[RMDB]
Structure probing data (DMS and 2A3) for a 207-nucleotide construct.
Conditions: 150 mM KOAc, 10 mM MgCl2 and 150 mM bicine (pH 8.5), 24 C.
For 2A3 the reverse transcriptase was SuperScript II with manganese.
DMS adducts were read by reverse transcription with MarathonRT.
RNA sequence: GGGAACGACUCGAGUAGAGUCGAAAAGCAACGCAAAGCCGCGGCAAGUGGAGUUAGCGAGAAGAGACUAGGCUUUGGUUUCUUCAAGUGAAGUGGUCACCAAUCAGGUGUGGUAGUUACCGUAAAAAUAACCGCUCUUUGUUCGCAAAGAGCGGAAGUUAAGUUGAAGGUUCGCCUUCAACUUAACAAAAGAAACAACAACAACAAC
Reactivity to DMS in 0.01 (KOAc 150mM, MgCl2 10mM, bicine 150mM(pH8.5), 24C), signal-to-noise 2, nucleotides 027 to 156: g010c010a060a060c070g000c030a050a060a160g010c060c070g000c040g020g010c030a050a110g000u000g010g000a130g020u000u010a220g020c000g010a290g020a040a040g020a040g010a050c000u000a080g050g030c110u030u000u000g020g000u000u000u010c020u000u030c010a020a300g000u010g000a040a070g020u000g020g010u000c030a080c030c020a080a110u010c080a150g000g010u010g010u000g010g000u000a040g010u000u000a050c000c040g000u000a030a030a100a070a130u010a120a180c000c010g020c000u000c010u000u010u000g000u000u000c300g000c010a010a010a020g020a020g000c000g010g000a010a010
Reactivity to 2A3 in 0.01 (KOAc 150mM, MgCl2 10mM, bicine 150mM(pH8.5), 24C), signal-to-noise 4, nucleotides 027 to 156: g000c010a030a030c030g020c060a070a080a010g030c030c010g030c040g060g030c050a080a060g020u040g040g060a080g030u110u080a030g030c040g020a030g010a080a010g010a000g010a000c020u050a050g060g130c000u090u120u090g020g000u010u030u000c000u010u020c030a070a020g020u040g060a050a030g010u030g030g000u020c030a010c070c010a050a070u150c040a060g030g010u030g020u040g060g010u040a060g040u050u100a040c020c040g050u080a080a040a030a010a020u120a050a040c000c000g010c010u000c000u010u010u000g060u070u090c180g000c090a000a000a010g010a000g000c000g000g000a000a000